This 177-nucleotide RNA was probed chemically with DMS and 2A3. The reactions ran in a buffer of 150 mM KOAc, 10 mM MgCl2 and 150 mM bicine (pH 8.5), at 24 C.
[RMDB]
RNA sequence: GGGAACGACUCGAGUAGAGUCGAAAAACAUGCCUGUAGUCCCAGCUACUCGGGAGGCUGAGGCACGAGAAUCGUUUGAACCCGGGAAGCAGAGGUUGCAGUGAGCCGAGAUGGCGCCAUUGCACUGAAAUUUAGGGGUGUUCGCACCCCUAAAUUUAAAAGAAACAACAACAACAAC
Reactivity to DMS in 0.01 (KOAc 150mM, MgCl2 10mM, bicine 150mM(pH8.5), 24C), signal-to-noise 3, nucleotides 027 to 126: a040c050a070u030g000c040c000u030g020u020a120g010u000c000c010c040a100g010c000u000a030c000u000c030g000g000g010a120g000g000c030u020g020a060g010g000c040a070c070g000a210g010a080a070u020c110g000u000u000u000g020a100a100c000c000c000g010g000g030a140a060g020c100a150g030a190g010g000u010u000g020c000a030g010u000g020a300g000c000c000g000a110g000a140u040g000g010c020g010c130c000a000u000u010g000c010a030c050u000g010
Reactivity to 2A3 in 0.01 (KOAc 150mM, MgCl2 10mM, bicine 150mM(pH8.5), 24C), signal-to-noise 3, nucleotides 027 to 126: a010c010a020u100g060c020c000u020g050u090a020g030u010c000c010c000a000g010c000u040a040c000u040c080g010g020g000a110g030g000c010u010g050a090g040g050c040a000c010g070a160g070a190a180u120c140g080u040u100u160g080a070a040c040c000c000g000g050g010a010a000g020c050a020g050a040g140g010u160u070g000c000a000g040u000g010a020g040c000c000g230a240g030a220u270g050g020c030g040c120c010a020u020u000g000c010a010c000u090g020